This 177-nucleotide RNA was probed chemically with 2A3 and DMS.
The RNA was probed in 150 mM KOAc, 10 mM MgCl2 and 150 mM bicine (pH 8.5) at 24 C.
DMS adducts were read by reverse transcription with MarathonRT.
Source: RMDB library 15KREP, as collected in RNAgym.
RNA sequence: GGGAACGACUCGAGUAGAGUCGAAAAAUUCCGAGGAUGUUUCCCAGCCAGGGAUUUUCGUCCUCGAGUUUCUUGAUGGUUCUCCUGCUCUUCCGGAGCCUUCUUUCGAGGUCUUCCGCGUCUUUUCAUCAAUAUUAGGGUUCGCCCUAAUAUUGAUAAAAGAAACAACAACAACAAC
Reactivity to 2A3 in 0.01 (KOAc 150mM, MgCl2 10mM, bicine 150mM(pH8.5), 24C), signal-to-noise 3, nucleotides 027 to 126: a000u050u030c100c020g000a010g010g000a000u010g010u010u010u040c010c010c010a030g180c110c110a070g040g020g000a040u110u070u090u250c000g000u000c000c010u010c000g010a020g000u010u040u000c030u040u090g040a090u100g050g050u100u060c020u030c020c030u010g030c030u040c040u240u040c050c090g020g030a010g020c030c000u070u050c010u070u110u040c030g000a010g030g050u020c030u050u010c020c010g090c030g080u020c000u020u050u010u040c040
Reactivity to DMS in 0.01 (KOAc 150mM, MgCl2 10mM, bicine 150mM(pH8.5), 24C), signal-to-noise 2, nucleotides 027 to 126: a050u000u010c100c020g020a030g010g000a010u000g000u010u010u000c000c000c010a180g010c250c290a200g010g010g010a020u000u000u000u000c010g000u000c000c000u000c000g010a040g000u000u000u000c040u000u000g010a070u000g010g000u000u010c030u000c020c030u000g010c070u000c050u000u010c080c060g000g000a100g000c060c040u010u000c040u000u000u010c050g010a040g010g010u010c040u010u000c000c020g000c190g000u010c010u000u000u000u000c160